[RMDB]
RNA sequence: GGGAACGACUCGAGUAGAGUCGAAAAAGGCUGCAGUCCAUGGGUGGAAGAUGGUUGUGUGUGAUAAGGUACGUUCUCUCAAAUUGAGUGAUAAUAAUUGUUAUCUUAAUGCAGUUAUUAUGACACUAAGCAUCACGGUUCGCCGUGAUGAAAAGAAACAACAACAACAAC
Reactivity to DMS in 0.01 (KOAc 150mM, MgCl2 10mM, bicine 150mM(pH8.5), 24C), signal-to-noise 6, nucleotides 027 to 129: a050g030g000c040u020g030c060a130g000u030c080c080a100u030g040g020g030u020g000g000a090a080g000a070u010g040g000u000u000g030u050g040u000g020u000g030a080u050a090a060g020g000u000a040c060g000u000u010c000u020c020u000c150a050a080a140u060u020g010a030g040u000g020a030u000a020a020u030a000a000u010u020g010u010u000a070u020c240u040u010a110a090u030g010c000a020g030u020u020a010u030u010a020u030g000a020c050a020c050u000a050a070g040
Reactivity to 2A3 in 0.01 (KOAc 150mM, MgCl2 10mM, bicine 150mM(pH8.5), 24C), signal-to-noise 6, nucleotides 027 to 129: a020g010g000c010u020g010c050a030g050u020c040c020a050u110g030g000g040u040g010g020a080a040g010a050u080g110g000u050u020g030u020g020u020g020u030g040a060u040a130a020g020g010u020a020c020g010u020u000c010u000c000u020c040a060a070a110u090u120g060a090g020u010g040a000u000a000a000u000a000a000u000u020g010u040u100a170u160c160u130u210a120a090u180g010c000a000g000u010u000a000u000u010a010u030g080a010c010a000c040u010a030a010g070